[RMDB]
RNA sequence: GGGAACGACUCGAGUAGAGUCGAAAAGGCCGCAGUGAAGAGGCCCAAGCGACUGUUUACCAAAAACACAGGACUCUGCAUAAGCCGCGAGGCGACGUAUAGGGUCUGACGCCUGCCCGGUGCCGGAGUGUACAGGGUUAUUCGUAACCCUGUACACAAAAGAAACAACAACAACAAC
Reactivity to DMS in 0.01 (KOAc 150mM, MgCl2 10mM, bicine 150mM(pH8.5), 24C), signal-to-noise 4, nucleotides 027 to 126: g000g010c010c040g000c050a070g020u030g000a120a100g000a110g000g000c050c020c080a140a140g010c060g010a100c070u010g000u000u000u010a100c080c140a040a070a050a070a080c060a080c120a150g000g000a060c010u000c040u000g010c040a020u010a130a220g000c020c000g000c270g000a180g000g000c000g000a050c210g000u020a050u000a070g000g000g000u000c000u000g000a100c100g010c020c010u000g010c000c010c000g000g010u010g000c040c030g010g000a290
Reactivity to 2A3 in 0.01 (KOAc 150mM, MgCl2 10mM, bicine 150mM(pH8.5), 24C), signal-to-noise 4, nucleotides 027 to 126: g040g000c010c000g010c050a030g040u070g130a120a050g020a090g050g010c000c000c000a080a020g020c010g090a050c030u020g050u060u090u170a200c070c060a120a080a000a020a040c070a010c010a060g050g040a040c030u020c010u060g010c010a060u060a220a060g020c010c000g040c040g040a070g010g010c010g010a020c060g040u070a060u060a080g000g040g000u000c000u020g040a010c030g000c000c000u040g020c000c000c000g000g040u050g000c020c000g060g020a070
Description:
An RNA of 177 nucleotides, treated with DMS and 2A3 and read out base by base. Reactivities are rounded to 0.1 and cut off at 0 and 3. The reactions ran in a buffer of 150 mM KOAc, 10 mM MgCl2 and 150 mM bicine (pH 8.5), at 24 C. 2A3 adducts were read by reverse transcription with SuperScript II with manganese.